Overview:
This 207-nucleotide RNA was probed chemically with DMS and 2A3. 2A3 adducts were read by reverse transcription with SuperScript II with manganese. Conditions: 150 mM KOAc, 10 mM MgCl2 and 150 mM bicine (pH 8.5), 24 C. Source: RMDB library OK3TST, as collected in RNAgym. The DMS profile rests on 2,552 reads.
[RMDB]
RNA sequence: GGGAACGACUCGAGUAGAGUCGAAAAUUAAAAGCUCAUUAUAUGCUAAAGGUAGUUGGUGGGCAAAGAUAGUUAUAAUCCUGCCUCGUAGUGAUUAUGGUCUACUUGAGGAGACAGUAAUUAAUCAAAUAGUGGUACAAGUAAAUAUAAAACUACAGUGUUCUAUAUGGUUCGCCAUAUAGAACACAAAAGAAACAACAACAACAAC
Reactivity to DMS in 0.01 (KOAc 150mM, MgCl2 10mM, bicine 150mM(pH8.5), 24C), signal-to-noise 2, nucleotides 027 to 156: u020u010a090a070a140a150g000c010u010c060a140u010u000a090u000a060u010g000c030u010a080a110a110g030g010u010a070g050u010u010g000g030u000g020g020g040c040a090a050a110g020a100u010a070g040u000u010a080u010a100a070u000c030c010u000g000c060c000u000c030g050u000a050g010u000g000a080u000u000a090u010g020g050u010c030u000a050c030u000u020g030a100g020g020a080g000a050c000a070g010u000a050a040u000u010a030a100u000c040a070a060a150u000a070g000u000g020g000u000a040c030a020a040g020u000a050a070a070u000a100u000a010a050a090a110c010u000a040c040a170
Reactivity to 2A3 in 0.01 (KOAc 150mM, MgCl2 10mM, bicine 150mM(pH8.5), 24C), signal-to-noise 2, nucleotides 027 to 156: u070u060a000a050a010a090g020c010u010c070a040u030u220a120u020a010u230g010c020u060a110a050a100g100g000u050a030g030u110u130g030g010u020g010g000g040c050a020a030a100g050a030u100a010g040u110u110a050u130a070a070u090c030c010u020g050c020c010u010c040g020u010a010g010u000g050a060u050u130a040u130g060g050u020c000u020a100c090u170u090g010a040g040g020a030g020a000c040a000g020u030a060a070u110u050a010a040u040c010a010a010a100u060a080g010u030g030g000u020a030c020a120a030g010u090a050a070a040u140a030u080a150a090a040a000c020u280a030c080a020